Chemical mapping of a 207-nucleotide RNA with 2A3 and DMS. DMS adducts were read by reverse transcription with MarathonRT. For 2A3, 14,401 sequencing reads were counted. The reactions ran in a buffer of 150 mM KOAc, 10 mM MgCl2 and 150 mM bicine (pH 8.5), at 24 C.
RNA sequence: GGGAACGACUCGAGUAGAGUCGAAAAGAUUACUUCGGUAAUCAUAGUAGAUAUGGAUCGGUCACGCGAGAAGCAACAGCGUCACCACCUCGGAAACGAGGUGUUGACGACAUGCUUCUCGACCGAUCCUAAGUCCUCACUCAAGCUUCGGCUUGAAGCCUUAUAUGGAAUUCGUUCCAUAUAAGGCAAAAGAAACAACAACAACAAC
Reactivity to 2A3 in 0.01 (KOAc 150mM, MgCl2 10mM, bicine 150mM(pH8.5), 24C), signal-to-noise 9, nucleotides 027 to 156: g000a000u020u030a000c020u050u120c300g100g000u000a000a000u000c010a010u080a040g150u070a020g020a100u060a040u170g000g000a000u000c010g000g020u030c090a050c300g170c160g040a010g000a010a000g000c010a010a100c040a130g060c010g000u000c000a000c010c000a000c000c000u000c010g020g040a090a100a090c020g000a000g000g000u000g000u000u000g000a000c000g020a020c000a000u030g000c000u000u000c000u000c000g000a000c000c000g000a000u000c000c000u000a000a000g000u020c000c010u070c030a060c040u050c010a010a010g010c000u070u280c260g100g000c010u020u040g010a040a010
Reactivity to DMS in 0.01 (KOAc 150mM, MgCl2 10mM, bicine 150mM(pH8.5), 24C), signal-to-noise 2, nucleotides 027 to 156: g000a020u000u010a010c000u010u000c250g030g020u000a000a010u000c000a060u000a150g010u010a050g030a100u000a290u000g000g010a010u000c000g040g000u000c000a200c170g060c080g000a030g000a050a030g070c000a070a060c130a060g000c040g020u000c000a000c080c000a000c000c000u000c020g000g020a180a120a300c020g010a000g030g030u000g000u000u000g000a000c000g000a060c070a250u000g000c010u000u000c000u030c010g020a010c010c000g000a010u000c000c000u000a020a060g030u000c020c040u000c030a140c070u000c000a010a040g010c030u000u000c210g040g020c030u010u000g010a000a160
For DMS, 3,401 sequencing reads were counted.